Annotation
An RNA of 177 nucleotides, treated with DMS and 2A3 and read out base by base. Conditions: 150 mM KOAc, 10 mM MgCl2 and 150 mM bicine (pH 8.5), 24 C. It was measured as part of the RMDB library OK1LIB. In probing experiments dimethyl sulfate is read out at A N1 and C N3, which are open when not base-paired. 2A3 adducts were read by reverse transcription with SuperScript II with manganese.

[RMDB]
RNA sequence: GGGAACGACUCGAGUAGAGUCGAAAAAGCGCUUCGCUGAUAACGAAGAGGUCGGAGGUUCGAGUCCUCCUAGGCCCACGACCAUGUGCCCGUCACGACGUUCGGUGAGGUUCGCAUUGCCACUGGCGACUAUAAAGGGGUUCGCCCCUUUAUAGUCAAAAGAAACAACAACAACAAC
Reactivity to DMS in 0.01 (KOAc 150mM, MgCl2 10mM, bicine 150mM(pH8.5), 24C), signal-to-noise 6, nucleotides 027 to 126: a070g000c040g000c070u000u000c020g030c020u010g000a130u010a060a130c040g000a100a090g010a110g010g020u000c020g010g000a110g000g020u000u000c160g020a300g010u030c010c010u000c010c000u000a100g010g000c020c020c060a160c060g000a010c020c020a140u030g010u000g000c050c010c050g010u020c030a040c020g010a110c040g030u030u000c050g000g000u000g000a110g000g000u020u010c120g000c040a070u020u010g000c010c030a190c010u000g000g010c300
Reactivity to 2A3 in 0.01 (KOAc 150mM, MgCl2 10mM, bicine 150mM(pH8.5), 24C), signal-to-noise 9, nucleotides 027 to 126: a000g040c030g000c030u030u020c010g000c020u040g060a110u090a170a020c030g030a060a040g060a090g080g000u020c050g010g020a030g000g020u070u170c060g050a060g120u050c010c000u000c000c000u020a070g020g000c000c000c010a030c030g050a040c020c040a100u170g040u080g070c030c050c030g080u120c070a010c060g070a010c010g030u010u030c020g000g030u040g020a020g020g020u080u110c050g000c020a060u030u170g040c010c000a060c030u020g010g010c030